The record gives the reactivity of an RNA of 177 nucleotides to 2A3 and DMS.

RNA sequence: GGGAACGACUCGAGUAGAGUCGAAAAGUUCUAGGCCCCUGUUCCUGGGGACUUGAAGGCGGUUUUACAUACUGGUCAGACACGGCUGGAGGCCAAGGUCAAGUUGAAAGUUGCAGUCCAGCCAGCAUGGCUCUUGUUAAUUCGUUAACAAGAGCCAAAAAGAAACAACAACAACAAC
Reactivity to 2A3 in 0.01 (KOAc 150mM, MgCl2 10mM, bicine 150mM(pH8.5), 24C), signal-to-noise 2, nucleotides 027 to 126: g000u050u040c000u010a110g050g040c000c000c020c070u070g060u150u120c030c000u050g020g000g050g020a010c000u000u020g000a050a010g090g040c030g030g100u000u070u070u130a000c020a060u200a040c020u090g000g060u000c000a010g040a150c010a020c070g000g000c000u000g000g040a010g020g000c030c060a000a000g160g030u030c010a060a040g020u080u020g080a150a120a060g040u040u030g000c050a070g110u000c000c000a000g000c000c000a000g000c030a030
Reactivity to DMS in 0.01 (KOAc 150mM, MgCl2 10mM, bicine 150mM(pH8.5), 24C), signal-to-noise 7, nucleotides 027 to 126: g010u000u010c030u000a060g010g000c010c020c030c020u010g000u010u000c040c040u000g010g010g000g000a060c040u010u010g020a050a070g000g010c100g000g000u010u000u010u020a080c100a090u010a060c060u000g010g020u000c030a100g010a140c110a110c170g010g020c000u000g020g010a080g010g010c020c060a070a160g000g010u010c070a060a140g000u010u000g000a080a090a110g000u000u000g000c040a070g000u000c010c010a030g000c000c010a110g030c150a140
The data come from the RNA Mapping Database (RMDB), libraries RFM100 and RFMREP.